[RMDB]
RNA sequence: GGGAACGACUCGAGUAGAGUCGAAAAACUGUGACCCUCACUCCGGGAGGAGGACACCGGUAGCCGGGCAGUUUGACUGGGGCGGUACGCGCUUGAAAAGAUAUCGAGCGCGCCCUAAGCCUAUCUCACAUUAAUACCUAUUCGUAGGUAUUAAUGUAAAAGAAACAACAACAACAAC
Reactivity to 2A3 in 0.01 (KOAc 150mM, MgCl2 10mM, bicine 150mM(pH8.5), 24C), signal-to-noise 9, nucleotides 027 to 126: a000c040u050g040u110g190a140c000c020c010u040c050a070c020u000c010c010g050g030g030a120g050g090a080g030g060a050c040a040c040c010g020g030u060a020g080c050c020g010g010g000c010a010g000u020u040u070g090a080c080u060g010g000g010g000c030g020g010u080a060c060g010c000g000c010u000u000g030a040a070a040a030g200a090u190a070u160c000g000a000g000c000g000c000g000c010c000c000u050a140a010g010c010c000u050a100u040c040u020c000
Reactivity to DMS in 0.01 (KOAc 150mM, MgCl2 10mM, bicine 150mM(pH8.5), 24C), signal-to-noise 9, nucleotides 027 to 126: a030c030u000g010u010g010a200c030c000c020u020c130a210c060u010c020c030g010g030g000a170g000g010a060g010g010a110c090a080c030c030g000g010u020a090g020c140c140g000g000g010c020a030g010u000u000u010g010a100c080u010g010g000g000g020c100g010g010u010a080c120g010c010g010c000u000u000g000a020a090a130a180g000a160u040a070u010c000g000a010g000c000g010c020g000c300c020c010u000a040a140g020c020c010u000a080u010c040u010c070